Chemical mapping of a 177-nucleotide RNA with DMS and 2A3. It was measured as part of the RMDB library OK1LIB. Reactivities are given for positions 27 through 126.
[RMDB]
RNA sequence: GGGAACGACUCGAGUAGAGUCGAAAAGACACGCUUUGCAGAUGACCUCCUCGUUGGUGUGUGUCGGUAAUGUUGUCAGUCACAGGCAACAGUUAACGAUCUGCAUAAAUAAAAAGAGAAGAACAAAGGUAAUGGUACCUUUCGAGGUACCAUUACCAAAAGAAACAACAACAACAAC
Reactivity to DMS in 0.01 (KOAc 150mM, MgCl2 10mM, bicine 150mM(pH8.5), 24C), signal-to-noise 2, nucleotides 027 to 126: g000a040c010a000c010g070c030u000u040u010g040c030a020g040a040u000g040a030c030c060u020c040c020u010c040g090u080u000g030g020u010g000u040g000u000g000u000c000g020g030u010a240a090u000g000u000u040g050u000c000a080g000u030c280a120c300a130g000g000c030a040a030c020a030g000u030u030a090a000c050g010a000u000c000u000g010c010a120u100a050a070a060u130a100a090a150a070a040g040a070g040a130a090g000a060a050c150a070a170a040
Reactivity to 2A3 in 0.01 (KOAc 150mM, MgCl2 10mM, bicine 150mM(pH8.5), 24C), signal-to-noise 2, nucleotides 027 to 126: g000a000c010a010c030g030c010u090u120u010g000c010a000g010a030u020g010a010c000c010u000c000c010u140c050g100u070u150g080g020u000g000u000g000u000g020u010c000g000g010u050a090a090u020g000u000u000g010u010c010a010g170u220c040a080c090a150g000g000c000a000a000c000a000g010u030u040a000a020c010g010a010u000c010u000g000c020a020u080a020a040a000u030a000a070a000a030a000g130a020g050a140a010g100a050a040c030a150a100a080